[RMDB]
RNA sequence: GGGAACGACUCGAGUAGAGUCGAAAAGAUGUGACGAGUAUCGUUCAUCCUGCAUGCCUUUACAGACACGAUUCAGAACAGAUGGUUAUGCUAUUUGGAUUUUAUCGUUAGGAGCCUGUGAAUUCUGUCAUCUGAUCUACUUCGGUAGAUCAGAUGAAAAAGAAACAACAACAACAAC
Reactivity to DMS in 0.01 (KOAc 150mM, MgCl2 10mM, bicine 150mM(pH8.5), 24C), signal-to-noise 4, nucleotides 027 to 126: g000a050u000g000u030g020a060c010g020a210g000u020a060u010c040g020u000u020c000a040u020c020c030u010g000c090a080u010g020c030c020u010u040u020a050c070a060g000a100c100a060c030g020a070u010u010c080a030g010a050a180c030a040g000a020u000g010g000u000u050a110u030g020c000u000a020u000u010u010g000g000a180u020u000u020u000a030u010c010g000u000u000a180g000g000a090g030c050c000u000g020u000g000a070a110u000u000c040u010g000
Reactivity to 2A3 in 0.01 (KOAc 150mM, MgCl2 10mM, bicine 150mM(pH8.5), 24C), signal-to-noise 6, nucleotides 027 to 126: g030a010u090g080u130g110a020c030g010a020g070u110a120u130c010g000u010u010c020a060u050c010c020u040g030c040a040u100g030c000c000u120u110u100a070c050a040g090a010c000a010c080g120a090u060u060c030a030g050a170a040c010a020g060a100u030g030g050u130u160a110u290g040c020u020a030u020u020u030g040g010a040u010u000u030u080a040u090c010g030u000u020a090g040g090a050g020c030c020u070g010u020g080a040a090u070u020c020u030g050
About this RNA: Structure probing data (DMS and 2A3) for a 177-nucleotide construct. Values cover nucleotides 27 to 126. Reactivities are rounded to 0.1 and cut off at 0 and 3. The RNA was probed in 150 mM KOAc, 10 mM MgCl2 and 150 mM bicine (pH 8.5) at 24 C. For 2A3 the reverse transcriptase was SuperScript II with manganese.